An RNA of 207 nucleotides, treated with 2A3 and DMS and read out base by base. Conditions: 150 mM KOAc, 10 mM MgCl2 and 150 mM bicine (pH 8.5), 24 C. For DMS, 1,515 sequencing reads were counted.
RNA sequence: GGGAACGACUCGAGUAGAGUCGAAAAACCAAGUCUGGGGGCCGAUGAGGGUUGGCUCAAAGUAGGGUUUUGACUUGAAAACUCAAGAUGUGACCCCAAAACGAUGGAGGUAAAUGAGAAUCCUCCUAAAACUAUGGACACUUCGGUGUCCAUAGAAGUAUAAAUGGGAGUUCGCUCCCAUUUAUACAAAAGAAACAACAACAACAAC
Reactivity to 2A3 in 0.01 (KOAc 150mM, MgCl2 10mM, bicine 150mM(pH8.5), 24C), signal-to-noise 2, nucleotides 027 to 156: a000c010c000a040a000g120u040c030u050g040g000g000g000g100c010c010g040a050u060g090a180g040g130g000u050u030g000g000c020u000c020a040a040a010g080u040a050g030g020g000u010u010u020u050g040a030c020u020u030g060a250a100a050a050c040u030c020a020a000g030a040u110g020u050g060a110c000c000c000c030a040a070a040a010c110g050a050u110g000g000a020g000g000u030a080a070a200u240g010a060g050a080a060u030c000c000u000c000c000u030a020a050a000a000c000u000a000u000g000g000a000c000a000c000u020u030c170g070g000u000g000u000c000c000a000u000a000g000a000a000
Reactivity to DMS in 0.01 (KOAc 150mM, MgCl2 10mM, bicine 150mM(pH8.5), 24C), signal-to-noise 1, nucleotides 027 to 156: a080c040c030a060a300g000u010c020u010g000g060g010g030g050c080c070g000a120u000g020a170g010g020g010u010u000g020g050c050u010c010a100a020a130g040u000a190g000g030g030u000u000u020u010g000a030c000u010u000g010a040a050a080a090c090u000c020a000a040g010a080u000g010u050g000a290c010c000c000c030a010a080a040a120c070g020a150u000g000g040a040g010g050u000a020a100a130u000g010a250g000a130a200u010c020c010u010c000c010u000a010a040a110a090c010u000a000u010g000g000a050c000a010c000u020u010c300g070g020u020g000u010c000c000a000u010a000g000a010a130